RNA sequence: GGGAACGACUCGAGUAGAGUCGAAAAACUAGUAUGUACAGGGGUGAGUUGACCUGUCAUCUAGACUGCUGACCAUCAACUCACCGGUCAGCUGGAUGAUGUCCACAGAGUACGACAUCAGUACGCAGUGUAUUGACUAGUUCGCUGGUCGAUACACAAAAGAAACAACAACAACAAC
Reactivity to 2A3 in 0.01 (KOAc 150mM, MgCl2 10mM, bicine 150mM(pH8.5), 24C), signal-to-noise 9, nucleotides 027 to 126: a000c010u010a010g050u130a050u060g070u080a010c010a010g020g030g030g050u130g090a150g050u070u050g080a070c000c010u000g010u000c000a000u000c000u000a020g070a120c050u040g000c000u000g000a000c010c000a060u100c030a040a080c050u020c080a050c020c020g000g000u000c000a000g000c010u020g040g020a010u030g000a000u010g010u000c020c020a070c070a090g110a020g080u070a040c050g000a000c000a010u010c000a010g060u080a020c050g000c050a020
Reactivity to DMS in 0.01 (KOAc 150mM, MgCl2 10mM, bicine 150mM(pH8.5), 24C), signal-to-noise 9, nucleotides 027 to 126: a230c010u000a010g000u050a010u010g010u060a000c010a010g000g000g010g010u020g000a090g020u000u000g000a070c010c020u000g000u000c000a000u010c010u000a020g000a160c060u010g000c010u000g000a020c000c070a180u020c080a050a040c070u010c060a070c150c110g000g000u000c000a010g000c000u010g000g010a020u000g000a020u000g000u000c000c130a100c180a140g010a110g010u010a090c190g000a030c040a020u010c020a050g010u020a030c120g000c160a130
Conditions: 150 mM KOAc, 10 mM MgCl2 and 150 mM bicine (pH 8.5), 24 C. Structure probing data (2A3 and DMS) for a 177-nucleotide construct. For DMS, 84,787 sequencing reads were counted. Reactivities are given for positions 27 through 126. Source: RMDB library OK1LIB, as collected in RNAgym.